Overview: The record gives the reactivity of an RNA of 177 nucleotides to DMS. For DMS the reverse transcriptase was MarathonRT. Reactivities are given for positions 27 through 126. The DMS profile rests on 1,584 reads. Source: RMDB library OK2TRN, as collected in RNAgym. The reactions ran in a buffer of 150 mM KOAc, 10 mM MgCl2 and 150 mM bicine (pH 8.5), at 24 C.
RNA sequence: GGGAACGACUCGAGUAGAGUCGAAAAAUGUGGGGUGGUCUGGUGUUGACCCCCAGAGGCCAGAGAAGACUUCUGCAUGGAGGAUGGAGUGAGCAUGGAGUGUGCGACUGCCAUAGGCCCUGCUCAGAGACGUUACACACUUCGGUGUGUAACGUCUAAAAGAAACAACAACAACAAC
Reactivity to DMS in 0.01 (KOAc 150mM, MgCl2 10mM, bicine 150mM(pH8.5), 24C), signal-to-noise 1, nucleotides 027 to 126: a040u000g000u000g000g010g000g020u000g020g020u000c020u000g010g030u020g010u010u000g000a210c070c000c020c030c010a050g010a060g000g010c030c020a050g000a130g000a120a050g010a070c030u000u010c030u010g030c090a020u010g000g000a120g000g000a060u000g030g010a100g010u000g010a110g020c000a090u010g000g000a060g020u030g020u010g020c080g000a110c130u000g010c050c050a070u020a080g010g010c040c000c030u000g020c030u010c050a120g000